[RMDB]
RNA sequence: GGGAACGACUCGAGUAGAGUCGAAAAGUGAGUCCUUACGAGGACUCACAAUAAAUUCAGCGGUAAUUCGACCGCGAAUAUUACCGCUGACGCGGUCGAAAAAGCUGCUACGUACGCGUAGCAGCAAAGCAGUAAUUACUUUCGAGUAAUUACUGCUAAAAGAAACAACAACAACAAC
Reactivity to DMS in 0.01 (KOAc 150mM, MgCl2 10mM, bicine 150mM(pH8.5), 24C), signal-to-noise 5, nucleotides 027 to 126: g010u000g000a020g020u000c000c000u010u000a150c180g030a050g010g000a000c000u010c000a010c000a030a050u040a030a090a090u030u000c020a040g010c010g000g000u010a040a050u000u010c050g000a180c150c180g010c020g010a070a040u010a080u000u010a100c030c020g000c040u000g010a070c180g000c070g000g000u010c050g000a050a110a060a110a070g000c000u000g020c000u000a000c010g020u020a100c250g020c020g020u000a000g020c010a000g000c000a010a010
Reactivity to 2A3 in 0.01 (KOAc 150mM, MgCl2 10mM, bicine 150mM(pH8.5), 24C), signal-to-noise 8, nucleotides 027 to 126: g000u000g000a000g000u010c000c000u030u040a080c290g130a030g010g000a000c000u000c000a000c000a000a000u020a000a020a020u120u080c030a000g030c010g080g060u100a060a090u040u020c020g050a070c040c040g080c010g050a010a010u110a030u050u110a080c000c020g000c060u040g010a020c030g020c020g030g030u070c060g030a060a030a010a020a000g000c000u000g000c000u000a000c000g020u010a010c190g000c010g140u000a000g000c000a000g000c000a030a000